[RMDB]
RNA sequence: GGGAACGACUCGAGUAGAGUCGAAAAGAAAUUCCCGAUCGGCGGUAAAGUCCGCGAGCCGAACGUAAAAGGUUUGGCAGGAACCGGUGAGAUUCCGGUACCGACAGUAUAGUCUGGAUGGAAGAAGGUAGCCUCCUCUCGUUCGCGAGAGGAGGAACAUAUUACUAGUCUUCGGACUAGUAAUAUGAAAAGAAACAACAACAACAAC
Reactivity to 2A3 in 0.01 (KOAc 150mM, MgCl2 10mM, bicine 150mM(pH8.5), 24C), signal-to-noise 2, nucleotides 027 to 156: g010a000a060a000u030u020c020c000c010g020a200u090c010g020g000c000g020g000u010a030a000a000g000u010c010c010g010c010g000a010g000c000c000g020a010a010c000g030u170a020a060a080a120g060g010u020u020u000g000g000c000a000g020g000a000a000c000c000g010g000u000g000a030g000a000u000u010c000c000g030g000u000a000c000c000g000a000c000a000g010u040a040u120a190g040u040c070u070g080g090a110u080g050g040a040a060g020a040a040g160g050u060a030g050c000c000u000c020c000u000c000u000c000g020u080u040c170g000c020g110a010g020a000g000g030a000g000g000a000a000
Reactivity to DMS in 0.01 (KOAc 150mM, MgCl2 10mM, bicine 150mM(pH8.5), 24C), signal-to-noise 3, nucleotides 027 to 156: g000a090a130a210u010u000c010c000c000g010a080u010c030g020g010c010g020g000u000a090a190a060g030u000c010c010g000c010g010a300g010c000c000g020a010a030c010g030u010a140a130a190a270g020g040u000u000u000g010g020c000a100g030g000a030a040c010c000g000g020u010g010a300g000a300u010u010c010c020g000g010u010a000c000c000g010a060c070a100g000u000a090u000a110g020u010c030u000g010g000a100u010g010g010a100a120g000a120a070g030g010u000a130g010c000c000u000c000c000u000c000u000c000g010u000u010c250g010c050g000a030g000a030g010g010a000g000g010a000a030